[RMDB]
RNA sequence: GGGAACGACUCGAGUAGAGUCGAAAAUAUUGGAUUUGACCGUUAUUGCUGGUUUGCUUUUUCUAAAACAAGACAUAAAAUGGUCUUCAGGGAAGUAAUGAAGUUGAAAGAAUCUACUAGUGUAUACGUAAUACCAUGCCUUCGGGCAUGGUAUUACAAAAGAAACAACAACAACAAC
Reactivity to DMS in 0.01 (KOAc 150mM, MgCl2 10mM, bicine 150mM(pH8.5), 24C), signal-to-noise 1, nucleotides 027 to 126: u010a050u020u010g000g010a160u010u020u000g000a070c010c020g020u020u000a030u000u000g020c020u000g010g000u000u000u000g010c070u020u010u000u000u000c030u000a140a080a040a070c130a050a010g020a030c040a070u010a110a040a060a160u000g010g000u000c020u030u000c160a090g010g000g010a060a030g000u010a070a130u010g000a050a050g010u020u000g010a060a080a080g010a010a030u000c030u000a040c040u010a080g010u000g020u000a040u000a100c120